[RMDB]
Chemical mapping of a 207-nucleotide RNA with 2A3 and DMS. Source: RMDB library RSTRND, as collected in RNAgym.
RNA sequence: GGGAACGACUCGAGUAGAGUCGAAAAGCUUGACUCCGUUAAAGGCUACAGACAAACCCUCAACGGAUGCUCUAGUAAGGUUUCUCUGGUUACUUGCUAGUUAAGACUCAACCUGAGUAUCCUGUCAUCCGGGAUAAUGGAUGGUCCCCGCCCAGAGCUAUAUACAUAAGUUCGCUUAUGUAUAUAGAAAAGAAACAACAACAACAAC
Reactivity to 2A3 in 0.01 (KOAc 150mM, MgCl2 10mM, bicine 150mM(pH8.5), 24C), signal-to-noise 7, nucleotides 027 to 156: g000c010u020u020g010a010c010u000c000c000g000u010u000a020a030a000g020g010c010u060a050c080a180g210a090c110a100a130a170c010c000c010u090c100a010a000c000g010g010a010u010g000c000u000c000u000a010g000u010a010a010g000g000u000u020u020c000u000c010u010g000g010u010u010a010c000u000u010g010c000u000a010g000u020u010a040a010g040a060c050u080c270a010a020c010c000u000g000a000g000u010a090u060c000c000u050g080u120c000a010u000c010c000g000g000g030a040u200a090a060u140g010g000a000u010g000g020u020c010c000c010c020g070c030c030c020a060g030a020g110
Reactivity to DMS in 0.01 (KOAc 150mM, MgCl2 10mM, bicine 150mM(pH8.5), 24C), signal-to-noise 3, nucleotides 027 to 156: g020c030u010u000g010a070c020u010c020c000g000u000u000a150a020a030g070g010c010u000a300c110a200g000a120c110a120a110a070c000c000c000u000c030a030a040c020g010g000a050u000g010c030u010c020u000a030g020u000a050a040g010g000u010u010u000c020u000c000u000g010g030u000u000a090c020u000u000g010c010u000a030g030u000u000a090a260g010a140c050u000c090a040a050c020c010u000g000a050g000u000a200u000c010c000u010g010u000c050a040u000c090c020g010g010g010a160u010a060a100u000g010g010a060u000g030g010u000c000c000c000c020g010c040c010c010a220g010a140g010
Background: In probing experiments dimethyl sulfate is read out at A N1 and C N3, which are open when not base-paired.